RNA sequence: GGGAACGACUCGAGUAGAGUCGAAAAUGAUAUAAUCUGCAUCCGACAACGAUCACCAACUUCCACCUUGAUCGAUUGGUCGCAUAAUCCAUUAAAUUUGGAAGUAGUCGCUCAUGCUUAUCAGUACAUGCGUGAUAUGAUUCGUCAUAUCACGCAUAAAAGAAACAACAACAACAAC
Reactivity to 2A3 in 0.01 (KOAc 150mM, MgCl2 10mM, bicine 150mM(pH8.5), 24C), signal-to-noise 7, nucleotides 027 to 126: u070g030a010u040a020u050a160a130u080c060u070g010c000a030u030c060c010g020a010c020a100a040c040g040a040u070c030a030c090c030a080a040c020u050u020c020c000a040c000c020u020u070g020a030u040c030g060a070u010u060g070g030u070c010g000c040a030u060a080a010u020c000c010a010u060u100a090a070a090u090u040u020g010g000a010a020g020u030a030g030u030c020g000c030u050c050a030u060g010c010u050u060a090u130c050a050g050u070a060c020
Reactivity to DMS in 0.01 (KOAc 150mM, MgCl2 10mM, bicine 150mM(pH8.5), 24C), signal-to-noise 5, nucleotides 027 to 126: u020g010a120u020a040u020a080a070u020c070u010g000c020a060u010c120c040g000a060c060a070a050c090g010a070u010c030a080c120c070a100a040c010u010u000c040c030a060c300c080u010u000g000a060u000c170g020a070u000u000g000g000u010c100g020c130a100u010a060a060u020c010c010a040u040u010a020a050a040u030u020u010g000g000a020a080g000u010a070g010u000c060g000c070u010c100a050u020g030c050u000u000a050u000c070a060g000u030a080c160
The record gives the reactivity of an RNA of 177 nucleotides to 2A3 and DMS. Values cover nucleotides 27 to 126. For DMS the reverse transcriptase was MarathonRT. The data come from the RNA Mapping Database (RMDB), library OK1LIB. Conditions: 150 mM KOAc, 10 mM MgCl2 and 150 mM bicine (pH 8.5), 24 C. The DMS profile rests on 7,580 reads.